[RMDB]
RNA sequence: GGGAACGACUCGAGUAGAGUCGAAAAGAGUUACCCUAUGAGUGGAAGGAGAAGGUGAGGACGAGCAACCUUGCGGAGAACAUGUUUCGGCACAUGAGAAGCUUUCUGCGGAGGUAUCCUGGGUAUAACUCAACGAGAGAUUCGUCUCUCGUUGAGUAAAAGAAACAACAACAACAAC
Reactivity to 2A3 in 0.01 (KOAc 150mM, MgCl2 10mM, bicine 150mM(pH8.5), 24C), signal-to-noise 2, nucleotides 027 to 126: g080a000g040u100u140a160c020c010c030u070a140u160g050a060g050u040g000g020a080a040g020g050a030g010a050a040g020g030u050g030a030g020g020a070c030g030a010g030c010a020a050c010c000u000u080g020c030g000g030a040g010a030a010c020a060u050g020u030u070u060c060g060g010c060a040c010a100u080g030a060g050a150a010g010c030u010u070u000c020u030g020c040g030g030a000g050g000u040a040u030c010c030u040g000g100g000u130a140u050a120
Reactivity to DMS in 0.01 (KOAc 150mM, MgCl2 10mM, bicine 150mM(pH8.5), 24C), signal-to-noise 3, nucleotides 027 to 126: g010a130g020u000u000a110c030c010c020u000a080u000g020a080g030u000g010g020a080a070g000g010a080g030a080a080g010g020u010g020a070g000g020a070c070g000a080g010c110a050a080c030c010u010u000g000c020g010g000a090g010a040a120c110a040u010g000u000u020u010c110g000g010c100a090c120a060u010g000a090g000a080a100g010c110u000u000u000c030u000g000c060g000g010a010g020g010u000a070u010c030c020u000g000g020g000u000a080u000a100
Chemical mapping of a 177-nucleotide RNA with 2A3 and DMS. Reactivities are given for positions 27 through 126. For DMS the reverse transcriptase was MarathonRT.